RNA sequence: GGGAACGACUCGAGUAGAGUCGAAAAAGAAAUGGAGGACCAGAGGGGCCAGAAGUUUGUUCAGUAUCACACAGUUAGGAAAUGGGUCUUAAAGGUAGCAGAUCUGAUGCCUAGAGCAGUAUGCUUUCCACAGUCCCUCAGCUGCUGCUGCCUGGCAGCGAUUAUUACGGUUCGCCGUAAUAAUCGCAAAAGAAACAACAACAACAAC
Reactivity to DMS in 0.01 (KOAc 150mM, MgCl2 10mM, bicine 150mM(pH8.5), 24C), signal-to-noise 2, nucleotides 027 to 156: a090g010a040a110a080u000g020g010a100g010g050a100c050c050a130g000a100g030g000g050g050c010c020a070g030a060a100g010u000u000u000g000u000u000c090a090g000u000a090u000c030a060c060a100c060a130g060u000u000a050g010g020a030a100a090u000g020g040g010u000c030u010u000a010a050a070g020g040u000a050g010c070a040g020a110u000c080u000g030a080u000g000c020c030u010a060g010a060g020c000a070g000u000a050u020g020c040u000u000u030c000c010a020c100a160g010u000c020c000c000u000c110a170g030c000u010g020c000u000g010c000u000g040c030c040u000g000g010c080a160
Reactivity to 2A3 in 0.01 (KOAc 150mM, MgCl2 10mM, bicine 150mM(pH8.5), 24C), signal-to-noise 3, nucleotides 027 to 156: a000g060a020a050a010u090g010g010a030g030g000a020c010c030a040g020a020g000g000g000g020c030c020a040g030a090a030g080u040u100u120g080u130u080c050a040g040u090a080u190c010a020c020a010c010a060g050u130u130a040g040g020a030a090a130u130g040g000g020u000c010u020u090a040a070a000g030g000u030a020g000c030a010g010a100u050c020u170g060a060u080g010c010c000u030a030g010a000g030c000a000g000u030a020u280g020c030u050u060u070c050c030a080c020a070g060u050c010c000c020u030c000a000g000c010u050g000c010u010g000c000u030g050c020c010u010g010g000c010a020